[RMDB]
RNA sequence: GGGAACGACUCGAGUAGAGUCGAAAAUCGUGACGUAUCUCAUCGUUGAAGCCGUCACUGACGGACUCAUCUUCUGCAGACGGUAUAAGAUCCGGAGUAGGCUGCGAGACAACGAGCAUCUCCUCAGUGGUCUCCUCUGGCGGUGAGAUCAUGCUGGAUUAACAUCCACGUUCGCGUGGAUGUUAAUAAAAGAAACAACAACAACAAC
Reactivity to DMS in 0.01 (KOAc 150mM, MgCl2 10mM, bicine 150mM(pH8.5), 24C), signal-to-noise 2, nucleotides 027 to 156: u000c050g000u000g000a100c060g070u020a040u000c020u000c000a090u000c050g010u000u000g000a200a220g030c010c020g030u010c010a110c070u000g030a300c010g040g030a030c060u000c160a070u010c040u000u000c070u000g000c000a250g000a050c020g000g000u000a070u000a070a220g010a110u010c060c050g000g000a130g020u010a070g000g040c060u010g010c040g010a130g010a130c070a050a080c050g010a170g040c100a180u000c100u000c040c000u000c040a160g030u000g000g000u000c000u000c000c010u000c000u010g030g020c010g010g020u000g000a020g000a010u000c060a110u000g000c000u020g000g000
Reactivity to 2A3 in 0.01 (KOAc 150mM, MgCl2 10mM, bicine 150mM(pH8.5), 24C), signal-to-noise 3, nucleotides 027 to 156: u080c070g040u080g050a100c050g050u100a020u010c010u000c000a010u000c010g040u050u120g090a100a010g020c010c010g020u020c030a070c290u080g080a130c020g020g010a020c020u010c120a200u030c070u170u000c010u040g010c020a020g020a120c000g010g030u070a100u030a170a070g090a110u020c020c000g000g010a000g010u030a000g010g000c020u020g010c020g010a020g010a030c080a180a060c150g070a030g060c060a180u050c020u050c060c000u000c050a050g010u000g010g020u000c000u020c000c030u000c000u000g000g000c010g000g000u010g010a000g010a000u010c020a010u040g020c000u050g000g090